[RMDB]
RNA sequence: GGGAACGACUCGAGUAGAGUCGAAAAGACAACCAUUUGCAUGAUUUUGCACGAUAUAAAUCUAACAGCAAGAUACGCUGAUUACCUAUUUGCAAUUAAAGAAGGUAAACUUGUUGCAGAGGGAAAGUCGUGGAUACCGAUUCGUCGGUAUCCACGAAAAAGAAACAACAACAACAAC
Reactivity to DMS in 0.01 (KOAc 150mM, MgCl2 10mM, bicine 150mM(pH8.5), 24C), signal-to-noise 2, nucleotides 027 to 126: g000a000c030a180a190c010c030a180u040u010u000g080c060a040u000g000a000u000u010u010u000g010c030a060c170g010a240u000a090u040a030a020a030u020c000u060a090a060c120a070g020c000a120a130g000a140u040a020c200g000c130u000g000a040u000u020a060c040c000u000a210u000u000u000g010c120a010a010u000u000a000a040a030g000a050a110g070g030u030a070a200a080c090u000u050g000u000u000g000c000a000g000a040g010g090g000a050a000a120g010
Reactivity to 2A3 in 0.01 (KOAc 150mM, MgCl2 10mM, bicine 150mM(pH8.5), 24C), signal-to-noise 3, nucleotides 027 to 126: g060a020c050a030a040c010c030a030u060u130u050g020c060a100u060g150a160u070u060u020u010g110c050a060c170g110a030u100a000u130a210a150a010u030c010u000a010a080c010a000g010c020a000a090g040a300u210a030c040g050c060u020g050a230u030u150a150c030c000u180a300u110u040u000g000c020a030a020u090u100a150a090a000g210a140a070g170g010u300a110a010a110c020u010u010g040u000u000g020c000a000g000a020g000g000g000a000a140a000g060
Overview: Conditions: 150 mM KOAc, 10 mM MgCl2 and 150 mM bicine (pH 8.5), 24 C. Chemical mapping of a 177-nucleotide RNA with DMS and 2A3. For DMS the reverse transcriptase was MarathonRT. It was measured as part of the RMDB library OK1LIB. For 2A3, 1,047 sequencing reads were counted.